Chemical mapping of a 177-nucleotide RNA with DMS and 2A3. High DMS reactivity at an A or C suggests that its Watson-Crick edge is free. For DMS, 25,108 sequencing reads were counted. The reactions ran in a buffer of 150 mM KOAc, 10 mM MgCl2 and 150 mM bicine (pH 8.5), at 24 C.

RNA sequence: GGGAACGACUCGAGUAGAGUCGAAAAUGAUAGCGCCGAGUAUGAAGACUGGUGGGGCCGUAGAGAGCGUGCAAACUGUUAUGGCCGCUGAUCGUGGCAUACCGGCUAAGGUAUCGUAGUGCACGCACGACCUAUAUUACUUCGGUAAUAUAGGUCGAAAAGAAACAACAACAACAAC
Reactivity to DMS in 0.01 (KOAc 150mM, MgCl2 10mM, bicine 150mM(pH8.5), 24C), signal-to-noise 6, nucleotides 027 to 126: u030g000a040u000a050g020c100g000c010c010g010a160g020u010a040u000g000a090a090g010a060c110u010g010g010u010g000g030g000g010c010c010g020u000a050g010a090g010a100g010c010g000u000g000c040a030a080a120c080u030g000u020u010a040u020g000g000c000c000g000c030u010g000a070u020c100g010u020g000g000c010a020u000a000c020c010g010g000c050u020a080a090g020g010u000a020u000c040g030u010a070g010u010g000c010a010c000g000c020a300
Reactivity to 2A3 in 0.01 (KOAc 150mM, MgCl2 10mM, bicine 150mM(pH8.5), 24C), signal-to-noise 9, nucleotides 027 to 126: u180g010a030u050a070g150c040g010c020c000g020a060g060u060a050u110g060a180a090g100a110c080u090g020g040u130g040g080g070g000c020c010g020u080a020g010a010g010a010g090c020g010u040g010c020a050a120a080c050u070g070u270u080a050u130g040g000c020c020g030c050u020g070a120u080c070g030u090g040g000c000a000u000a010c000c010g000g040c070u070a130a030g060g010u050a020u060c030g040u050a040g060u020g030c020a010c040g010c000a020